[RMDB]
RNA sequence: GGGAACGACUCGAGUAGAGUCGAAAAGGCGAAAGCGAUUACCAAGAACUGAUCUGACGAUCAAGCACGUGAGCAGGAGUAUCGAAGAGGAUUAGAGACCCACGUAGUUCCUUGCAGUCAACGAUGCUUUAGUGACUUGCUUCGGCAAGUCACUAAAAAAAGAAACAACAACAACAAC
Reactivity to DMS in 0.01 (KOAc 150mM, MgCl2 10mM, bicine 150mM(pH8.5), 24C), signal-to-noise 2, nucleotides 027 to 126: g030g060c010g010a080a050a100g070c040g030a130u000u000a100c050c030a220a190g000a080a150c130u000g020a000u000c000u010g000a090c210g040a010u000c020a080a070g030c110a070c040g000u000g000a110g000c060a100g000g000a100g000u000a070u040c010g000a050a090g020a100g060g000a060u010u070a050g000a220g000a110c020c000c070a070c060g000u000a140g000u000u000c000c000u000u050g030c100a110g050u020c170a060a000c050g000a000u000g010c010
Reactivity to 2A3 in 0.01 (KOAc 150mM, MgCl2 10mM, bicine 150mM(pH8.5), 24C), signal-to-noise 2, nucleotides 027 to 126: g090g000c040g020a030a000a000g010c040g030a030u060u090a030c020c020a010a010g150a040a050c110u050g010a000u000c020u070g110a040c180g010a010u030c010a000a010g080c050a010c040g050u030g020a010g000c050a010g020g000a060g030u040a040u160c010g040a100a020g110a230g080g000a050u010u040a060g090a020g030a180c010c000c000a020c020g000u020a010g050u000u000c000c000u000u230g010c000a000g030u040c020a040a070c020g080a140u010g000c000
Chemical mapping of a 177-nucleotide RNA with DMS and 2A3. Conditions: 150 mM KOAc, 10 mM MgCl2 and 150 mM bicine (pH 8.5), 24 C. DMS adducts were read by reverse transcription with MarathonRT. High DMS reactivity at an A or C suggests that its Watson-Crick edge is free. It was measured as part of the RMDB library RFM100. For 2A3 the reverse transcriptase was SuperScript II with manganese.